[RMDB]
RNA sequence: GGGAACGACUCGAGUAGAGUCGAAAACUCUCGACAUUUGAUCAUGAAAUAUGUGCCUCGCUGCGAGUAAGCUCUAUAUUGUAGAUACCCUUUGCAUGUGACAAGAGAGCAACAGACAUAUCCUGUUGGGGUUGGUUCGCUUCGGUGGGUCGGCUUCAAAAGAAACAACAACAACAAC
Reactivity to 2A3 in 0.01 (KOAc 150mM, MgCl2 10mM, bicine 150mM(pH8.5), 24C), signal-to-noise 9, nucleotides 027 to 126: c010u000c010u010c030g060a060c070a110u100u110u170g070a070u120c060a060u110g130a070a130a040u220a050u090g050u050g030c010c010u020c030g030c030u050g010c010g010a020g040u040a080a030g010c000u000c010u020a070u020a060u160u170g060u040a020g020a060u100a090c030c000c000u020u040u110g030c040a050u120g020u040g080a040c040a090a050g030a000g000a010g060c010a020a020c010a020g070a020c020a060u130a050u080c010c020u040g040u050u030
Reactivity to DMS in 0.01 (KOAc 150mM, MgCl2 10mM, bicine 150mM(pH8.5), 24C), signal-to-noise 9, nucleotides 027 to 126: c090u000c020u000c030g020a110c110a080u010u000u010g010a090u000c080a070u000g010a090a100a090u010a060u000g010u000g010c040c030u000c050g010c050u000g010c040g010a070g010u000a060a110g010c080u000c020u000a070u000a100u010u000g010u000a040g010a090u000a110c060c080c030u000u000u000g020c040a040u010g010u000g010a090c120a050a080g010a060g010a070g010c040a040a040c070a050g000a100c100a060u000a080u000c050c030u000g010u000u000